[RMDB]
Structure probing data (2A3 and DMS) for a 177-nucleotide construct.
RNA sequence: GGGAACGACUCGAGUAGAGUCGAAAAGAAGGGAAAGGAGACCCAUGGACAGUCUCCAGAGGUUCCUAAGGCCUCGCUCGCGCCUGCCGGGAGGCAGAAUGUCCCGGUUGUCCAUGCAAGAAGAAGACGACCUGACUAUAUUCGUAUAGUCAGGUCGAAAAGAAACAACAACAACAAC
Reactivity to 2A3 in 0.01 (KOAc 150mM, MgCl2 10mM, bicine 150mM(pH8.5), 24C), signal-to-noise 3, nucleotides 027 to 126: g110a040a030g040g010g040a150a080a050g010g000a000g000a010c000c000c020a040u000g000g000a010c010a010g000u000c000u000c000c010a030g010a000g030g010u090u110c030c050u050a050a090g030g000c010c000u000c020g020c030u110c050g180c060g000c020c010u030g000c000c010g000g020g000a000g000g020c070a100g200a060a080u150g040u040c000c000c000g000g000u000u030g000u000c000c010a000u030g000c030a030a180g060a100a020g040a070a020g080a120
Reactivity to DMS in 0.01 (KOAc 150mM, MgCl2 10mM, bicine 150mM(pH8.5), 24C), signal-to-noise 2, nucleotides 027 to 126: g010a160a070g000g000g030a080a130a060g000g020a060g010a000c010c190c140a010u000g010g000a010c000a040g000u010c010u030c000c000a060g000a050g000g010u020u010c030c060u020a140a140g000g000c000c000u010c030g000c080u010c210g020c130g010c010c000u000g000c000c010g000g000g000a070g000g000c040a080g030a070a060u040g000u000c000c020c040g000g010u020u010g010u000c000c000a010u000g000c280a060a100g000a110a090g000a250a070g030a160
Conditions: 150 mM KOAc, 10 mM MgCl2 and 150 mM bicine (pH 8.5), 24 C. The 2A3 profile rests on 2,041 reads. The DMS profile rests on 2,122 reads. 2A3 adducts were read by reverse transcription with SuperScript II with manganese.